[RMDB]
RNA sequence: GGGAACGACUCGAGUAGAGUCGAAAAGAAGAGACCGCCACAAGGAGUCAGGGUUCAGACACGAUCCAAGAGAACACGGUAACACUGACUGUGCAGCGGAAGAGGCAAAGAGAGUGGCGGAAGAGAAAAUAUCACCUCACUUCGGUGAGGUGAUAUUAAAAGAAACAACAACAACAAC
Reactivity to DMS in 0.01 (KOAc 150mM, MgCl2 10mM, bicine 150mM(pH8.5), 24C), signal-to-noise 4, nucleotides 027 to 126: g030a120a100g000a130g000a120c000c000g010c000c000a000c020a210a110g000g030a030g030u000c000a000g000g000g000u000u010c210a120g000a120c210a070c070g000a130u020c050c110a100a140g010a140g010a050a080c100a080c050g000g000u010a030a020c030a080c030u000g010a040c000u010g020u010g000c040a010g010c020g000g030a090a070g000a050g010g010c030a050a090a180g000a130g000a130g000u000g000g030c030g000g000a040a060g010a160g010a070a060
Reactivity to 2A3 in 0.01 (KOAc 150mM, MgCl2 10mM, bicine 150mM(pH8.5), 24C), signal-to-noise 3, nucleotides 027 to 126: g130a020a020g090a000g060a080c000c020g040c000c000a010c010a000a100g120g000a010g090u000c010a000g040g000g000u030u050c090a040g050a120c050a010c090g040a050u030c040c030a170a020g080a030g000a090a020c090a000c090g020g010u010a010a010c020a000c010u020g000a000c010u050g060u100g070c050a040g010c020g060g010a040a000g040a010g060g000c000a010a090a030g170a020g010a000g020u010g000g030c000g010g000a040a000g050a000g000a010a170
An RNA of 177 nucleotides, treated with DMS and 2A3 and read out base by base. The reactions ran in a buffer of 150 mM KOAc, 10 mM MgCl2 and 150 mM bicine (pH 8.5), at 24 C. Source: RMDB library OK1LIB, as collected in RNAgym.